[RMDB]
Chemical mapping of a 177-nucleotide RNA with 2A3 and DMS.
The RNA was probed in 150 mM KOAc, 10 mM MgCl2 and 150 mM bicine (pH 8.5) at 24 C.
For 2A3 the reverse transcriptase was SuperScript II with manganese.
Values cover nucleotides 27 to 126.
The DMS profile rests on 1,261 reads.

RNA sequence: GGGAACGACUCGAGUAGAGUCGAAAAGAUAUGGAUCUUUAGCUCAUCGAUCAUAGGGAGAACUCGGAAACGAGACCCUAUGGGAGAGCAAAGAUCCUAAGUCAAAAGCUAUACUUCGGUAUAGCAAGUAAGUACAAUGCUUCGGCAUUGUACUUACAAAAGAAACAACAACAACAAC
Reactivity to 2A3 in 0.01 (KOAc 150mM, MgCl2 10mM, bicine 150mM(pH8.5), 24C), signal-to-noise 2, nucleotides 027 to 126: g010a020u090a050u130g000g000a000u000c000u010u000u060a080g000c000u010c040a240u300c220g060a110u080c000a010u010a000g030g090g020a290g130a230a100c010u000c000g020g000a050a030a060c020g020a010g070a150c020c000c000u000a000u000g010g050g000a100g000a000g000c010a010a030a000g000a000u000c010c000u010a030a000g040u000c020a110a050a000a000g000c000u010a000u010a020c020u020u090c260g060g000u030a000u010a000g010c020a010a000
Reactivity to DMS in 0.01 (KOAc 150mM, MgCl2 10mM, bicine 150mM(pH8.5), 24C), signal-to-noise 2, nucleotides 027 to 126: g000a060u000a240u010g010g000a000u000c000u000u000u000a150g030c000u000c010a280u000c170g000a060u000c000a000u000a010g000g000g000a210g000a080a090c030u010c000g010g000a090a050a200c000g000a010g040a080c010c000c000u000a000u000g000g020g000a060g020a000g000c000a040a000a000g000a010u000c010c010u000a020a090g000u000c000a050a110a110a140g000c000u010a000u000a020c000u000u010c170g030g010u000a000u000a000g000c010a070a030